An RNA of 177 nucleotides, treated with DMS and 2A3 and read out base by base. The data come from the RNA Mapping Database (RMDB), library OK2TRN. High 2A3 reactivity points to a flexible backbone, as in loops and unpaired stretches. For DMS, 2,571 sequencing reads were counted. 2A3 adducts were read by reverse transcription with SuperScript II with manganese.

[RMDB]
RNA sequence: GGGAACGACUCGAGUAGAGUCGAAAAUCGCGACGAAUUCACCGGCACGGAUAUCAAGCGUAAUGCCGUGCAGGACUUCCACCGCAAGAUCGCCAUUGUGAAAUGUCUUACAGAUAUCCUCAAGCCACUAGCUAAUACCGUUCGCGGUAUUAGCUAGAAAAGAAACAACAACAACAAC
Reactivity to DMS in 0.01 (KOAc 150mM, MgCl2 10mM, bicine 150mM(pH8.5), 24C), signal-to-noise 3, nucleotides 027 to 126: u020c070g010c020g010a080c120g020a070a050u010u000c210a140c030c030g020g010c010a060c050g020g000a090u000a100u000c080a100a100g000c220g020u010a110a050u010g000c000c020g000u010g000c000a030g010g010a110c150u000u000c010c030a120c060c050g000c040a100a070g010a070u010c090g020c010c010a080u000u000g000u000g000a030a100a060u010g000u000c060u000u010a060c080a110g020a070u000a060u000c020c000u010c080a060a120g000c040c070a160
Reactivity to 2A3 in 0.01 (KOAc 150mM, MgCl2 10mM, bicine 150mM(pH8.5), 24C), signal-to-noise 3, nucleotides 027 to 126: u060c020g010c030g040a020c030g040a050a080u120u080c060a040c090c000g020g010c010a000c010g040g000a020u050a010u140c070a130a090g090c030g150u110a120a040u200g020c020c010g000u010g000c000a010g010g060a010c000u050u000c030c000a040c030c000g000c020a040a010g020a090u120c040g000c070c010a050u050u070g030u040g070a050a060a050u110g020u020c020u040u040a060c040a020g020a060u030a030u050c000c030u040c020a000a030g000c020c010a030